This 177-nucleotide RNA was probed chemically with DMS and 2A3. For DMS, 7,279 sequencing reads were counted. For 2A3, 4,339 sequencing reads were counted. Values cover nucleotides 27 to 126.
RNA sequence: GGGAACGACUCGAGUAGAGUCGAAAAUCUGGAGCUUAGUGGUGAAGCAUGGGAAGUAAAGAAGUCUUUCAAGCGCAUGCAAUGUGGAAGGACGCAGGACAAUGAGCAAUAGACACUCUUACAUAGGUCUAUAGUACAGCUUCGGCUGUACUAUAGAAAAAGAAACAACAACAACAAC
Reactivity to DMS in 0.01 (KOAc 150mM, MgCl2 10mM, bicine 150mM(pH8.5), 24C), signal-to-noise 7, nucleotides 027 to 126: u000c020u010g010g010a200g020c040u000u000a080g040u010g020g030u010g000a090a070g010c050a050u000g000g010g000a090a100g010u000a040a070a100g000a110a140g000u000c020u000u000u010c080a080a120g020c060g020c070a040u000g010c080a080a080u000g020u000g010g010a090a090g010g020a050c070g020c040a050g010g010a070c080a050a060u010g010a040g010c050a060a090u000a070g000a060c090a060c060u000c050u000u000a060c120a110u010a050g010g010
Reactivity to 2A3 in 0.01 (KOAc 150mM, MgCl2 10mM, bicine 150mM(pH8.5), 24C), signal-to-noise 4, nucleotides 027 to 126: u010c020u020g050g020a030g040c010u030u080a040g030u080g110g010u050g070a060a000g000c010a020u050g020g000g000a050a040g030u120a070a050a030g100a080a030g070u020c010u010u080u040c050a100a090g040c040g000c060a000u130g040c020a030a190u090g040u050g050g010a040a020g050g010a020c020g000c020a000g000g030a010c040a040a090u120g020a030g020c020a030a060u020a050g030a010c010a010c070u060c020u060u080a070c050a140u120a060g150g000